[RMDB]
RNA sequence: GGGAACGACUCGAGUAGAGUCGAAAAGCGUUGUUCGCAACGCCAAGUGAUAUGGACGGAUGGAGAUCUACAUCGUUGAAAUUUAAUCGGAAACGAUUAAAUGGAGAUGUAGGGAGUCUCCUGCCCGUCCUAAGUCGUGAAGGGGUUUCGACCCCAACUUGAUCUAUUCAUUCGUGAAUAGAUCAAGAAAAGAAACAACAACAACAAC
Reactivity to 2A3 in 0.01 (KOAc 150mM, MgCl2 10mM, bicine 150mM(pH8.5), 24C), signal-to-noise 6, nucleotides 027 to 156: g020c010g000u020u020g030u090u160c230g020c120a010a000c020g030c030c010a160a010g140u080g090a000u000a000u030g000g000a000c010g010g000a000u000g010g000a000g000a020u230c000u000a000c000a000u010c020g150u210u000g000a000a000a000u000u000u000a000a000u000c000g000g000a000a000a000c000g000a000u000u000a000a000a000u000g000g010a020g000a010u000g000u000a010g010g000g010a040g010u000c000u000c000c000u000g040c000c010c000g020u000c000c000u000a000a000g000u000c010g020u080g110a190a130g050g010g000g000u070u100u210c230g070a090c000c000c010c000a000a010
Reactivity to DMS in 0.01 (KOAc 150mM, MgCl2 10mM, bicine 150mM(pH8.5), 24C), signal-to-noise 2, nucleotides 027 to 156: g020c020g000u000u000g000u000u010c210g030c040a020a020c000g000c010c000a070a260g030u010g000a010u000a020u000g000g000a050c000g000g020a240u010g010g000a030g010a030u000c010u000a000c000a020u000c010g000u010u000g000a110a130a030u010u000u000a000a020u000c010g000g020a020a000a030c000g020a030u000u000a000a030a000u000g000g000a040g000a020u000g010u010a000g000g010g040a300g000u000c000u000c000c000u000g020c300c000c030g000u000c000c000u000a000a100g010u000c000g000u000g000a160a200g000g010g010g030u000u000u010c140g010a160c000c000c000c000a010a010